[RMDB]
RNA sequence: GGGAACGACUCGAGUAGAGUCGAAAACCCCUCGUCUCCCAUCAGCAGUUUCCUAAACUGGGACAUGAUGUCCACCACGCGGACCCGCGGGCCCAACACGGACCCGCCGCUUACGGGGGCGGGGGGGAUCAACCUCUCCAUUCGUGGAGAGGUUGAUAAAAGAAACAACAACAACAAC
Reactivity to DMS in 0.01 (KOAc 150mM, MgCl2 10mM, bicine 150mM(pH8.5), 24C), signal-to-noise 2, nucleotides 027 to 126: c030c000c010c000u010c000g020u000c000u050c000c000c090a080u000c120a060g040c060a300g000u000u020u020c000c010u000a050a210a070c150u040g000g050g000a020c000a020u060g000a140u080g030u000c010c070a120c080c050a020c110g010c060g000g000a100c060c060c070g000c030g040g000g030c000c000c000a120a220c140a050c090g000g010a010c030c000c010g000c000c120g000c010u000u060a070c290g000g000g000g000g000c000g040g010g030g000g010g000g010
Reactivity to 2A3 in 0.01 (KOAc 150mM, MgCl2 10mM, bicine 150mM(pH8.5), 24C), signal-to-noise 5, nucleotides 027 to 126: c000c000c000c000u000c000g040u000c060u020c000c020c000a040u060c040a000g060c010a020g040u030u070u130c030c040u180a170a200a210c100u130g000g020g010a000c020a090u300g030a110u200g040u040c020c020a090c020c010a090c150g060c110g000g030a050c010c030c090g000c010g000g000g000c010c010c010a140a160c140a020c100g000g040a070c000c000c000g020c000c010g010c000u040u000a060c050g000g000g000g000g000c000g000g000g000g000g010g010g000

The record gives the reactivity of an RNA of 177 nucleotides to DMS and 2A3.
Values cover nucleotides 27 to 126.
The 2A3 profile rests on 2,783 reads.
For DMS, 1,978 sequencing reads were counted.
The reactions ran in a buffer of 150 mM KOAc, 10 mM MgCl2 and 150 mM bicine (pH 8.5), at 24 C.